An RNA of 207 nucleotides, treated with 2A3 and read out base by base. Source: RMDB library RSTRND, as collected in RNAgym. Conditions: 150 mM KOAc, 10 mM MgCl2 and 150 mM bicine (pH 8.5), 24 C. 2A3 adducts were read by reverse transcription with SuperScript II with manganese. Reactivities are given for positions 27 through 156.
[RMDB]
RNA sequence: GGGAACGACUCGAGUAGAGUCGAAAAAAAAUGCAAACAAAAACGAAGAAAACACAAACGAAGUUCCAACAUUUAUGUUAAAUGCUGGACAAGCAAAUUACGCUUUCGCUUAAUUUGACUUAAAUACAAAUAUACGUUUGGCAAUUUUUAAUAGUCUAUCAUUACUUAGGUUCGCCUAAGUAAUGAUAAAAGAAACAACAACAACAAC
Reactivity to 2A3 in 0.01 (KOAc 150mM, MgCl2 10mM, bicine 150mM(pH8.5), 24C), signal-to-noise 2, nucleotides 027 to 156: a000a000a090a000u080g000c060a020a110a130c090a030a120a060a000a010c100g000a050a120g020a080a090a060a000c120a010c010a020a010a010c020g040a050a020g060u130u010c000c010a000a000c010a000u030u040u020a090u080g050u060u120a000a010a010u010g000c000u010g000g010a000c000a010a000g000c010a000a020a020u020u000a010c060g010c000u060u240u210c140g000c000u000u130a020a010u030u040u040g060a150c000u020u080a070a090a000u120a070c010a000a120a000u120a060u020a110c000g000u000u040u020g060g000c040a050a070u000u050u010u090u150a190a290u100a100g050u000c010u020